Structure probing data (DMS and 2A3) for a 177-nucleotide construct. The DMS profile rests on 3,190 reads. Source: RMDB library OK2TST, as collected in RNAgym.

[RMDB]
RNA sequence: GGGAACGACUCGAGUAGAGUCGAAAACAAGGGGGCGCCGGCAGGAGGACGUGCCAUGUCCACUAAUUUACCACACAGUGUUGAAUAAAUCUUAACCCAUCCUUACCUUAACAGCAGAAGAGGCGUCGUUAGUUCUUAGGUUCGCCUAAGAACUAACAAAAGAAACAACAACAACAAC
Reactivity to DMS in 0.01 (KOAc 150mM, MgCl2 10mM, bicine 150mM(pH8.5), 24C), signal-to-noise 4, nucleotides 027 to 126: c090a100a120g000g000g010g010g020c080g010c070c060g020g010c090a050g020g010a070g010g000a040c060g010u000g020c050c070a080u000g020u000c020c020a070c100u020a060a090u000u000u000a110c040c030a070c090a070c120a080g000u010g010u000u000g000a100a090u000a050a070a050u000c070u010u000a080a110c050c010c010a070u000c070c030u000u000a080c080c020u010u010a050a090c090a060g010c040a060g000a060a140g010a080g020g010c080g020u000c130
Reactivity to 2A3 in 0.01 (KOAc 150mM, MgCl2 10mM, bicine 150mM(pH8.5), 24C), signal-to-noise 1, nucleotides 027 to 126: c020a090a070g030g010g010g000g020c010g000c000c030g010g000c030a010g000g040a060g020g040a010c010g000u000g090c040c030a060u060g000u020c030c010a020c030u030a070a040u070u090u070a100c040c020a010c000a010c010a040g070u050g030u210u080g040a060a040u090a120a090a020u050c040u070u130a060a090c000c000c020a030u080c020c000u040u070a030c010c000u030u040a050a070c030a090g070c000a000g000a150a040g010a060g040g000c010g050u030c010
2A3 adducts were read by reverse transcription with SuperScript II with manganese.